[RMDB]
RNA sequence: GGGAACGACUCGAGUAGAGUCGAAAAACGAGUCCGUACGCGGACUCGAAGGGCCCCAGAAGACCAAGGGGCCCAAACCUACCACUCAUUAGAUGCAUGGAAAUCACUAGGUGAUACGUCAGCUAGAACACGCUUUUAAGCUUCGGCUUAAAAGCAACUCUACAAUCGACUUCGGUCGAUUGUAGAGAAAAGAAACAACAACAACAAC
Reactivity to 2A3 in 0.01 (KOAc 150mM, MgCl2 10mM, bicine 150mM(pH8.5), 24C), signal-to-noise 1, nucleotides 027 to 156: a000c000g000a010g000u000c020c000g050u030a040c290g030c030g100g010a000c000u000c000g010a000a020g000g000g000c000c000c000c000a100g040a260a010g110a130c080c030a140a150g000g000g010g000c000c000c000a000a000a000c010c000u030a010c010c040a090c010u090c030a060u170u240a060g030a090u110g090c130a060u060g030g150a120a110a160u120c060a010c050u030a050g090g030u030g020a010u020a080c110g070u030c000a010g010c020u050a000g010a150a040c080a000c130g000c000u000u010u000u020a010a000g000c000u030u060c200g020g010c010u000u000a000a010a000a020g000c000a000a000